[RMDB]
RNA sequence: GGGAACGACUCGAGUAGAGUCGAAAAGCGAUUUUUAAUGCGUAGGGUAGGAAGGAGCCGUAGAUGUUUCGGUCGUGGCCAGAAUGGAGGCAACGAUGAAACACUUCCCUUUAAAAGUUGCGUCACUCCUUAGAUCAAUCUUCGGAUUGAUCUAAGGAAAAGAAACAACAACAACAAC
Reactivity to DMS in 0.01 (KOAc 150mM, MgCl2 10mM, bicine 150mM(pH8.5), 24C), signal-to-noise 2, nucleotides 027 to 126: g000c030g000a000u000u000u010u010u060a060a100u010g010c090g000u010a140g000g010g020u030a070g000g010a060a060g010g000a110g010c050c050g020u020a090g020a190u000g010u010u000u000c000g010g050u000c020g040u000g000g000c000c010a150g040a140a180u020g010g010a130g010g000c000a010a000c000g010a000u000g000a040a020a010c030a050c030u000u010c000c000c000u000u010u000a080a030a060a090g000u010u000g000c210g030u010c100a160c190u000
Reactivity to 2A3 in 0.01 (KOAc 150mM, MgCl2 10mM, bicine 150mM(pH8.5), 24C), signal-to-noise 6, nucleotides 027 to 126: g020c010g010a010u020u020u020u040u190a130a110u160g060c070g040u050a050g030g050g040u040a010g020g060a070a010g030g030a030g020c020c000g040u050a020g020a190u040g010u000u000u010c060g060g010u020c010g000u000g030g000c010c000a020g150a240a190u280g140g100a070g040g000c000a010a000c000g000a010u060g020a000a010a000c000a000c010u000u010c000c000c000u060u110u060a050a100a030a030g000u000u010g030c050g050u050c010a010c040u000
The data come from the RNA Mapping Database (RMDB), libraries RFM100 and RFMREP. The record gives the reactivity of an RNA of 177 nucleotides to DMS and 2A3. Values cover nucleotides 27 to 126.